[RMDB]
RNA sequence: GGGAACGACUCGAGUAGAGUCGAAAAAUGGAUUCUCCACCAACUACCAUUUCAUCAGUUUGAGUAUACCAAGGACCUAUUAUUAGCCUUCCUUCUUGAACUAAUUUUUUUAUUCUCUCCUUACAUUCCACCCGUGAUCAUUCGUGAUCACGGGUGGAAAAGAAACAACAACAACAAC
Reactivity to 2A3 in 0.01 (KOAc 150mM, MgCl2 10mM, bicine 150mM(pH8.5), 24C), signal-to-noise 2, nucleotides 027 to 126: a010u010g030g010a050u060u000c060u000c080c000a000c000c000a030a010c020u050a050c010c010a060u100u160u060c020a090u000c020a030g000u010u130u070g100a050g060u120a100u070a220c050c010a040a050g010g000a020c040c010u000a020u150u090a100u050u120a070g070c000c060u010u010c010c000u010u060c050u000u000g090a020a040c030u010a240a260u160u010u030u000u000u050u060a090u230u030c030u000c020u020c000c000u050u110a070c010a220u040u010